Notes:
Source: RMDB library OK2TRN, as collected in RNAgym. An RNA of 177 nucleotides, treated with 2A3 and DMS and read out base by base.
[RMDB]
RNA sequence: GGGAACGACUCGAGUAGAGUCGAAAAUUGCUGCUGGCGGAGCUGGUAGAACUCGUGUUGGAGGCAGCUCUGGCUGUGUGGGUCGCCUGAUGUCCCGUAGCCCAAGUGUUCCAUCUCUAGUAGGGCCCAUACAUUCAUGUUUCGACAUGAAUGUAUGAAAAGAAACAACAACAACAAC
Reactivity to 2A3 in 0.01 (KOAc 150mM, MgCl2 10mM, bicine 150mM(pH8.5), 24C), signal-to-noise 3, nucleotides 027 to 126: u060u080g030c010u010g000c000u020g020g030c030g050g040a030g010c020u040g050g040u120a100g050a180a040c010u010c060g100u130g150u220u170g110g020a020g040g020c000a010g000c010u000c020u020g110g000c010u010g030u010g030u090g080g020g000u060c040g020c020c020u080g040a090u100g050u030c000c000c010g010u050a030g010c000c000c020a060a020g040u030g040u120u040c020c020a100u030c040u000c010u040a040g050u050a050g040g040g000c000c010
Reactivity to DMS in 0.01 (KOAc 150mM, MgCl2 10mM, bicine 150mM(pH8.5), 24C), signal-to-noise 9, nucleotides 027 to 126: u000u010g020c030u000g010c030u000g000g020c050g010g010a050g010c030u000g010g010u000a110g010a100a100c030u000c050g010u010g010u000u000g010g010a070g010g010c030a030g000c020u000c040u000g010g020c020u000g020u000g020u000g010g010g010u000c070g010c030c030u000g010a100u000g010u000c010c010c020g020u010a110g010c020c020c040a070a110g010u000g000u010u010c030c030a070u010c040u000c040u000a080g010u000a110g010g000g010c050c140
For DMS, 57,584 sequencing reads were counted.